[RMDB]
RNA sequence: GGGAACGACUCGAGUAGAGUCGAAAAACAACACGCUUCGGCGUGUUGUCGACGGAGGAAGCUGACGACGCGCUUGUGCCGCAGCAGGGAAGCGCAGCGUAAAUCAGAGGUGAUUCGUCACCUCUAAGGCCAUGAAUUACUUCGGUAAUUCAUGGCCAAAAGAAACAACAACAACAAC
Reactivity to 2A3 in 0.01 (KOAc 150mM, MgCl2 10mM, bicine 150mM(pH8.5), 24C), signal-to-noise 1, nucleotides 027 to 126: a000c000a010a000c010a000c010g000c030u060u040c120g130g010c000g020u000g000u000u000g000u010c010g020a030c030g030g030a040g080g060a040a040g040c030u050g070a030c020g020a010c040g010c000g000c060u110u080g080u140g050c030c020g000c030a080g080c040a040g000g020g060a040a000g030c010g000c020a010g000c000g040u090a060a090a080u120c030a010g000a000g000g040u040g000a040u000u080c080g010u030c050a000c040c000u030c020u000a010a050
Reactivity to DMS in 0.01 (KOAc 150mM, MgCl2 10mM, bicine 150mM(pH8.5), 24C), signal-to-noise 1, nucleotides 027 to 126: a010c010a020a010c000a010c010g020c000u000u030c240g020g000c000g010u000g010u000u000g010u000c040g000a120c020g010g000a040g000g020a060a110g020c010u000g000a070c060g000a070c200g000c020g020c090u000u010g020u000g020c030c050g000c040a050g000c140a060g010g000g000a120a040g000c040g030c000a060g010c010g040u000a080a050a130u010c100a020g000a030g030g020u000g010a030u000u000c090g000u000c000a020c030c000u000c000u000a020a100